[RMDB]
RNA sequence: GGGAACGACUCGAGUAGAGUCGAAAAUGAAUGGAAUCCAGCUAAGUACCCGAUUGCAUGACCAUUACCGCAAAGAAGAACACAACGCGCCCCUACAAUAACACUUCGCGAGGUAUUUAUCUUUAUGAACGUAGGGAAUAUUCGUAUUCCCUACGUUAAAAGAAACAACAACAACAAC
Reactivity to 2A3 in 0.01 (KOAc 150mM, MgCl2 10mM, bicine 150mM(pH8.5), 24C), signal-to-noise 8, nucleotides 027 to 126: u150g050a020a050u070g000g080a020a030u040c030c010a010g030c040u050a060a030g020u050a110c020c000c010g060a050u020u140g040c030a020u080g040a060c010c010a010u010u120a070c000c020g020c080a070a070a020g080a080a030g050a120a030c050a000c030a130a070c040g010c010g030c020c000c000c000u040a030c050a040a090u090a100a030c050a010c060u040u070c020g010c020g030a010g060g000u040a070u020u120u030a070u010c020u030u090u020a150u200g140
Reactivity to DMS in 0.01 (KOAc 150mM, MgCl2 10mM, bicine 150mM(pH8.5), 24C), signal-to-noise 9, nucleotides 027 to 126: u020g010a090a060u020g010g010a100a070u010c030c010a070g010c040u010a060a080g020u020a090c040c030c030g000a080u010u010g000c050a040u010g000a070c050c030a040u010u010a110c050c040g010c080a040a080a090g010a080a130g010a070a050c100a050c070a070a070c060g010c030g000c030c000c000c020u010a050c120a040a060u010a080a080c100a060c050u010u000c030g000c100g010a050g010g010u010a040u010u010u010a070u020c020u000u010u000a060u050g020
Background:
Conditions: 150 mM KOAc, 10 mM MgCl2 and 150 mM bicine (pH 8.5), 24 C. An RNA of 177 nucleotides, treated with 2A3 and DMS and read out base by base. It was measured as part of the RMDB libraries RFM100 and RFMREP. Reactivities are given for positions 27 through 126. 2A3 is a SHAPE reagent: it acylates the 2'-hydroxyl of flexible nucleotides of all four kinds.